Description:
The record gives the reactivity of an RNA of 177 nucleotides to 2A3 and DMS. The 2A3 profile rests on 910 reads.

RNA sequence: GGGAACGACUCGAGUAGAGUCGAAAAGAAGAUGAUGUGUAGGAUAGGUGGGAGGCUUUGAAGUGUGGACGCCAGUCUGCAUGGACCCGACCUUGAAAUACCACCCUUUAAUGAAAAACAAAUACAACUCUCUUAUGGUGUUCGCACCAUAAGAGAGAAAAGAAACAACAACAACAAC
Reactivity to 2A3 in 0.01 (KOAc 150mM, MgCl2 10mM, bicine 150mM(pH8.5), 24C), signal-to-noise 1, nucleotides 027 to 126: g020a030a030g050a030u130g060a050u060g160u060g020u050a000g070g020a030u020a040g020g000u000g000g060g010a110g080g030c100u170u100u250g070a070a040g000u000g000u030g070g000a000c020g010c080c010a010g000u000c010u020g000c000a020u000g000g000a040c000c000c000g040a040c010c000u010u020g020a050a020a000u020a010c000c000a010c020c030c010u000u170u080a190a130u140g170a160a060a000a000a000c030a050a110a010u160a100c070a080a070
Reactivity to DMS in 0.01 (KOAc 150mM, MgCl2 10mM, bicine 150mM(pH8.5), 24C), signal-to-noise 1, nucleotides 027 to 126: g000a030a050g010a170u020g010a040u000g010u060g040u010a000g000g020a190u000a040g000g000u010g020g000g070a100g010g030c100u000u000u010g000a090a170g030u000g000u010g030g000a040c040g030c210c250a120g000u000c010u010g030c010a000u000g000g000a120c030c000c000g020a040c000c030u010u000g010a070a090a100u010a030c040c010a010c000c040c080u000u000u000a020a090u000g010a040a080a020a080a060c170a060a040a040u010a080c160a100a110

Values cover nucleotides 27 to 126. For 2A3 the reverse transcriptase was SuperScript II with manganese. Conditions: 150 mM KOAc, 10 mM MgCl2 and 150 mM bicine (pH 8.5), 24 C.